An RNA of 177 nucleotides, treated with DMS and 2A3 and read out base by base. DMS adducts were read by reverse transcription with MarathonRT. The DMS profile rests on 753 reads. The 2A3 profile rests on 428 reads.
[RMDB]
RNA sequence: GGGAACGACUCGAGUAGAGUCGAAAAGUGCCGCCGACCGGUUCGAUUUCUUACAUUAAUCAUGCGACCUCCAGCAUUCAUCCGAUUGUGGCCAAAAUUGAGAUUCGCAAAGAGGGCAAAACCGGGCUAUCGUCGAGGAGUUCGCUCCUCGACGAUAAAAAGAAACAACAACAACAAC
Reactivity to DMS in 0.01 (KOAc 150mM, MgCl2 10mM, bicine 150mM(pH8.5), 24C), signal-to-noise 1, nucleotides 027 to 126: g010u030g000c110c010g000c000c040g070a080c090c000g000g020u010u020c000g000a080u180u000u000c040u120u040a120c100a080u000u000a000a020u000c060a060u000g020c000g000a160c130c000u040c080c120a300g020c160a070u000u070c030a070u000c040c050g000a030u030u000g040u040g000g000c060c090a240a020a100a070u000u000g000a100g000a190u040u030c010g050c000a050a000a050g000a090g020g020g060c010a090a000a080a170c000c000g030g020g070c060
Reactivity to 2A3 in 0.01 (KOAc 150mM, MgCl2 10mM, bicine 150mM(pH8.5), 24C), signal-to-noise 1, nucleotides 027 to 126: g130u020g050c000c000g010c000c050g000a000c020c020g040g040u050u090c090g020a080u000u110u050c000u090u050a020c000a050u060u150a090a040u120c060a000u080g000c030g070a000c000c020u170c020c000a000g000c000a060u080u070c030a070u050c100c030g020a100u140u070g040u020g060g000c150c170a130a130a130a080u050u000g050a010g050a070u020u020c000g000c020a020a020a020g030a000g000g050g000c000a070a050a000a000c000c000g080g000g000c000